[RMDB]
RNA sequence: GGGAACGACUCGAGUAGAGUCGAAAAUCCCAAAGCGGAUUUAGCUCGGUUGGGAGAGAUCCAGACCGAAGAUCUGGGCGUCCUGUGUUCGAUCCACAGAAUUCGCACCAUAAACAACGGGAGAUUCCCCUCCUGGGUAGUUCGCUACCCAGGAGGGAAAAGAAACAACAACAACAAC
Reactivity to 2A3 in 0.01 (KOAc 150mM, MgCl2 10mM, bicine 150mM(pH8.5), 24C), signal-to-noise 2, nucleotides 027 to 126: u000c000c000c000a000a000a000g010c000g000g000a000u040u030u100a070g000c020u020c020g090g050u130u210g040g030g000a050g000a010g020a060u010c010c000a010g050a030c030c000g130a060a030g060a080u040c000u030g020g000g000c000g020u060c000c000u040g000u000g030u060u140c010g000a050u030c000c030a010c000a050g040a050a030u020u030c000g000c050a160c010c000a050u230a150a050a010c080a070a020c050g000g050g000a130g000a020u090u110c080
Background:
This 177-nucleotide RNA was probed chemically with 2A3.